RNA sequence: GGGAACGACUCGAGUAGAGUCGAAAAGAUAUGGACUAAGAGCGAUAAGUCCCGUAUCGGAAACGAUACAGGACUUUUGACGCUUAUGUCCUAAGUCAAAACAGGCAUACGUUCGCGUAUGCCUGAAUCUGAUUAUCUUGUUCGCAAGAUAAUCAGAAAAAGAAACAACAACAACAAC
Reactivity to DMS in 0.01 (KOAc 150mM, MgCl2 10mM, bicine 150mM(pH8.5), 24C), signal-to-noise 8, nucleotides 027 to 126: g010a030u010a300u000g000g000a020c000u000a140a140g000a030g010c010g010a140u000a030a020g000u000c000c000c030g020u000a000u000c000g010g000a110a080a130c000g010a010u000a000c000a030g000g000a010c000u000u000u000u000g010a190c050g010c000u000u000a220u010g000u000c000c010u010a030a120g000u010c030a080a080a110a220c010a000g000g010c000a010u000a000c000g010u000u010c250g020c010g020u000a000u000g000c000c000u000g000a010a050
Reactivity to 2A3 in 0.01 (KOAc 150mM, MgCl2 10mM, bicine 150mM(pH8.5), 24C), signal-to-noise 6, nucleotides 027 to 126: g020a010u060a020u100g010g000a010c020u070a180a230g020a020g140c020g050a130u040a300a040g000u000c000c000c000g000u000a010u000c000g010g000a050a030a010c010g000a000u000a000c000a010g000g010a000c000u050u030u060u120g100a030c010g010c000u020u030a040u160g000u000c000c000u010a080a010g040u020c040a010a000a120a170c010a010g010g000c000a010u000a000c010g030u050u120c300g000c010g160u010a000u000g000c020c010u000g000a000a000